[RMDB]
Structure probing data (DMS and 2A3) for a 177-nucleotide construct.
For DMS the reverse transcriptase was MarathonRT.
2A3 adducts were read by reverse transcription with SuperScript II with manganese.
As a SHAPE reagent, 2A3 marks flexible, mostly unpaired nucleotides at the ribose 2'-OH.

RNA sequence: GGGAACGACUCGAGUAGAGUCGAAAACUGAGUGAAACGGCCUUUAGUGCAGAUCUUGGUGGUAGUAGCAAAUAUUCAAAUGCGAACUUUGAAGACUGAAGUGGAGAAAGGUUCCGUGUGAUCAGUAUCAUAGACGUUCAUUCGUGAACGUCUAUGAAAAAGAAACAACAACAACAAC
Reactivity to DMS in 0.01 (KOAc 150mM, MgCl2 10mM, bicine 150mM(pH8.5), 24C), signal-to-noise 6, nucleotides 027 to 126: c010u000g010a040g010u010g020a070a070a040c050g000g000c030c020u000u000u010a100g020u030g010c040a040g010a090u000c020u000u010g000g040u010g010g010u010a060g020u010a160g020c040a040a060a110u020a130u040u060c180a040a090a100u000g000c050g010a080a110c070u000u010u010g020a040a030g010a050c030u000g010a060a110g020u010g000g010a140g000a040a030a030g000g000u030u010c020c020g010u000g000u010g000a080u010c010a020g000u010a170
Reactivity to 2A3 in 0.01 (KOAc 150mM, MgCl2 10mM, bicine 150mM(pH8.5), 24C), signal-to-noise 7, nucleotides 027 to 126: c000u010g000a010g000u030g020a020a020a020c010g010g000c000c010u040u050u060a130g050u150g100c030a040g030a260u020c020u040u090g140g000u050g040g000u080a020g020u020a010g030c040a040a070a060u160a160u180u200c060a070a100a050u080g010c020g010a010a000c020u080u040u160g060a010a000g020a010c010u030g020a090a030g120u130g080g060a090g100a050a030a020g040g000u220u090c010c000g000u010g000u020g050a100u020c000a010g020u030a020